[RMDB]
RNA sequence: GGGAACGACUCGAGUAGAGUCGAAAAACUGCAUCUACGGAUGCAGAACUACGUUCAUCCAAUUUAUUUGGACGCAUGAAAUGAGAAUAGGGAACGGGAUUCUCAUACGCAGGCUUCGGCCUGCGAAAAAACUCCUUAUGCUUCGGCAUAAGGAGAAGUUCUAAGUUGCGUUCGCGCAACUUAGAACAAAAGAAACAACAACAACAAC
Reactivity to 2A3 in 0.01 (KOAc 150mM, MgCl2 10mM, bicine 150mM(pH8.5), 24C), signal-to-noise 1, nucleotides 027 to 156: a010c000u010g030c010a000u000c000u010a010c120g080g010a000u020g020c000a000g000a010a010c040u090a020c020g010u010u010c000a000u000c010c000a040a010u090u220u200a100u050u180u010g000g020a000c000g000c070a080u150g080a110a210a000u050g000a060g000a020a000u030a040g030g000g010a010a000c010g000g020g020a000u000u000c000u000c000a010u010a030c020g020c000a000g010g010c010u070u040c130g090g000c020c000u020g000c000g000a010a000a000a000a000a000c000u000c000c000u000u000a000u000g040c010u000u030c080g130g000c000a000u000a000a000g000g000a000g000a000a020
Structure probing data (2A3) for a 207-nucleotide construct.
Reactivities are given for positions 27 through 156.
Conditions: 150 mM KOAc, 10 mM MgCl2 and 150 mM bicine (pH 8.5), 24 C.
For 2A3, 658 sequencing reads were counted.
2A3 is a SHAPE reagent: it acylates the 2'-hydroxyl of flexible nucleotides of all four kinds.